[RMDB]
RNA sequence: GGGAACGACUCGAGUAGAGUCGAAAAUUCACGGGCCUUCCCUUCGAUGCCGAAGAUGGAAAGGAACUCCAUGGCCUCAUCCACGAGGGCCCGCUCACCGCGGUAGUACCGCCCGGUACGAAGGACCGAAAGUCAAAGCAUUCGUGCUUUGACUUUCAAAAGAAACAACAACAACAAC
Reactivity to 2A3 in 0.01 (KOAc 150mM, MgCl2 10mM, bicine 150mM(pH8.5), 24C), signal-to-noise 4, nucleotides 027 to 126: u070u050c030a020c040g000g000g000c010c000u050u000c020c030c000u020u050c070g060a130u110g060c050c030g030a050a050g110a100u090g000g040a050a060a120g080g050a100a060c050u010c060c040a070u120g090g000c000c000u030c040a070u040c030c020a040c090g010a040g010g000g000c000c000c010g030c030u060c030a070c010c050g000c020g020g010u050a060g060u050a090c000c020g030c010c020c020g010g000u020a010c030g020a040a010g040g020a030c020c050
Reactivity to DMS in 0.01 (KOAc 150mM, MgCl2 10mM, bicine 150mM(pH8.5), 24C), signal-to-noise 5, nucleotides 027 to 126: u000u010c100a200c060g020g000g000c010c020u000u000c020c130c010u000u010c040g010a130u020g020c080c010g010a050a070g020a110u000g010g010a050a170a080g010g000a090a080c110u010c050c070a060u000g000g020c050c020u000c100a070u000c040c050a090c240g010a040g000g000g000c030c000c020g020c080u000c100a090c090c070g030c060g000g010u000a130g010u000a300c010c030g000c040c120c040g000g010u000a050c030g010a050a080g000g000a230c210c110
An RNA of 177 nucleotides, treated with 2A3 and DMS and read out base by base. Conditions: 150 mM KOAc, 10 mM MgCl2 and 150 mM bicine (pH 8.5), 24 C. For DMS, 4,654 sequencing reads were counted. Values are in units of 0.01, from 0 to 300, in steps of 10. The data come from the RNA Mapping Database (RMDB), library OK2TST. For DMS the reverse transcriptase was MarathonRT.